[RMDB]
RNA sequence: GGGAACGACUCGAGUAGAGUCGAAAACUACGGUCUACCCUCCCUAGGAGGGGGGCCCACCUUCACCGCCGUUAGGGGAGUUUCAUCCAGCGAUGGCAAAGGUGACCCGUGAUGGAGGCGGUCGGGAUGGCACUGGUCCCGUGGUUACCUACCUGCAGGGUUAUGCAUAGUUCGCUAUGCAUAACCCAAAAGAAACAACAACAACAAC
Reactivity to 2A3 in 0.01 (KOAc 150mM, MgCl2 10mM, bicine 150mM(pH8.5), 24C), signal-to-noise 1, nucleotides 027 to 156: c000u040a020c020g050g000u060c010u140a300c040c050c000u060c070c050c030u070a210g040g040a060g020g020g000g000g030g000c050c030c010a060c020c000u000u020c030a030c000c000g030c000c000g060u050u300a180g000g010g020g020a160g040u040u230u140c060a210u050c050c080a010g040c040g140a080u190g120g050c100a150a030a000g000g000u000g070a010c000c010c010g080u060g040a060u100g100g080a020g020g000c020g040g020u020c060g060g020g020a060u090g000g000c010a040c240u070g010g070u080c010c000c010g000u000g000g000u060u030a000c020c020u020a070c000c000u000g000c030a020